[RMDB]
RNA sequence: GGGAACGACUCGAGUAGAGUCGAAAAGGCGCUGGAACGUGACCGCGACGUCGAUGCUCAGGGCGACCUGAUUGUCGGUAAGUACGCUAUGGGUCACGGCGGUCUGCGUCCAGAAGCGGCAGGCGCAGAAACCCUACUUGUUCGCAAGUAGGGUUUCAAAAGAAACAACAACAACAAC
Reactivity to DMS in 0.01 (KOAc 150mM, MgCl2 10mM, bicine 150mM(pH8.5), 24C), signal-to-noise 3, nucleotides 027 to 126: g000g010c030g000c010u010g020g000a150a100c010g020u020g000a010c000c020g000c010g030a040c000g000u020c020g000a000u000g000c210u000c000a050g000g000g020c300g000a250c000c020u000g010a010u000u010g000u000c010g010g000u010a130a110g000u010a140c000g000c010u030a120u030g010g040g020u000c010a020c010g020g010c050g020g000u040c010u010g010c010g040u030c010c040a130g000a120a080g000c020g010g020c020a150g010g000c000g000c060a120
Reactivity to 2A3 in 0.01 (KOAc 150mM, MgCl2 10mM, bicine 150mM(pH8.5), 24C), signal-to-noise 5, nucleotides 027 to 126: g060g000c030g000c060u070g030g040a140a020c020g020u010g000a000c010c010g000c000g010a010c010g030u020c020g000a010u020g020c000u010c000a000g000g000g040c050g070a140c000c000u010g000a040u020u070g020u020c010g000g020u070a160a080g030u070a120c010g000c040u080a170u280g120g000g000u010c010a000c010g000g000c010g010g020u010c030u040g000c030g010u020c020c000a070g050a140a010g040c010g030g000c030a030g060g010c030g000c020a000
Overview: Structure probing data (DMS and 2A3) for a 177-nucleotide construct. For DMS, 7,048 sequencing reads were counted. It was measured as part of the RMDB library OK1LIB.